[RMDB]
RNA sequence: GGGAACGACUCGAGUAGAGUCGAAAAGAUAUGGACCUAUAUUAGAACUACUCCGGCGGAUCGGAAACGAUCCGAUCGGAGCUUCUAUAGGUCCUAAGUCAAACGACGAUUCUUCGGAAUCGUCGAAGGAUACAUUUAUGUUCGCAUAAAUGUAUCCAAAAGAAACAACAACAACAAC
Reactivity to DMS in 0.01 (KOAc 150mM, MgCl2 10mM, bicine 150mM(pH8.5), 24C), signal-to-noise 5, nucleotides 027 to 126: g010a050u010a300u000g000g010a000c000c010u000a000u000a040u010u000a020g010a080a060c100u010a300c010u000c000c000g020g010c000g000g000a020u000c000g020g000a090a060a160c000g010a000u000c000c000g000a020u000c000g020g000a000g020c030u000u000c010u000a020u000a000g000g010u000c000c000u000a010a060g000u000c030a120a130a300c020g020a010c010g010a000u000u000c000u000u010c200g020g010a010a000u000c000g000u000c000g000a010a040
Reactivity to 2A3 in 0.01 (KOAc 150mM, MgCl2 10mM, bicine 150mM(pH8.5), 24C), signal-to-noise 4, nucleotides 027 to 126: g020a020u060a050u100g000g000a000c000c000u010a010u000a020u060u100a030g030a080a090c100u260a080c030u300c010c000g000g020c000g010g000a000u000c010g030g000a080a020a020c010g000a000u000c010c010g000a020u030c000g020g000a000g010c000u000u000c000u000a010u000a000g010g000u000c000c000u000a050a000g010u000c040a100a070a090c020g000a000c000g000a000u000u000c020u040u080c300g170g010a000a000u000c000g000u000c000g010a010a020